Conditions: 150 mM KOAc, 10 mM MgCl2 and 150 mM bicine (pH 8.5), 24 C. Chemical mapping of a 177-nucleotide RNA with 2A3 and DMS.
RNA sequence: GGGAACGACUCGAGUAGAGUCGAAAACCGCUAUGGGAAAAGGUGACAAGAAGAGCAGGAAGGGCAAGAUCUGGAGAGGCACCUACGGGAAUACGAGACCGAAGCCCAAGAACCUGCGCAGGCGGAAGCUCGCAACAUAAUUCGUUAUGUUGCGAGCAAAAGAAACAACAACAACAAC
Reactivity to 2A3 in 0.01 (KOAc 150mM, MgCl2 10mM, bicine 150mM(pH8.5), 24C), signal-to-noise 1, nucleotides 027 to 126: c020c000g000c060u160a180u240g090g020g000a130a170a000a020g040g030u100g050a050c010a030a070g140a050a010g030a020g010c020a010g010g010a080a080g040g000g000c020a040a030g010a120u030c020u070g000g020a080g040a070g070g090c030a020c020c000u000a040c060g100g000g010a070a020u220a110c040g010a040g050a040c040c020g000a050a020g030c000c000c000a010a030g030a020a050c010c010u010g010c020g030c010a010g010g000c010g000g020a020a010
Reactivity to DMS in 0.01 (KOAc 150mM, MgCl2 10mM, bicine 150mM(pH8.5), 24C), signal-to-noise 2, nucleotides 027 to 126: c000c000g030c130u000a060u000g050g000g000a070a070a100a080g010g000u000g000a100c070a090a080g010a110a050g010a090g010c060a070g010g000a160a210g000g000g020c010a090a210g020a030u000c060u000g030g010a070g030a130g030g000c130a090c030c020u000a050c110g020g010g010a060a020u010a050c040g000a080g010a070c040c010g010a170a170g040c020c000c030a100a160g010a050a100c030c050u010g010c030g000c060a050g000g000c100g000g000a100a050
For 2A3, 1,186 sequencing reads were counted. The DMS profile rests on 1,049 reads. For 2A3 the reverse transcriptase was SuperScript II with manganese.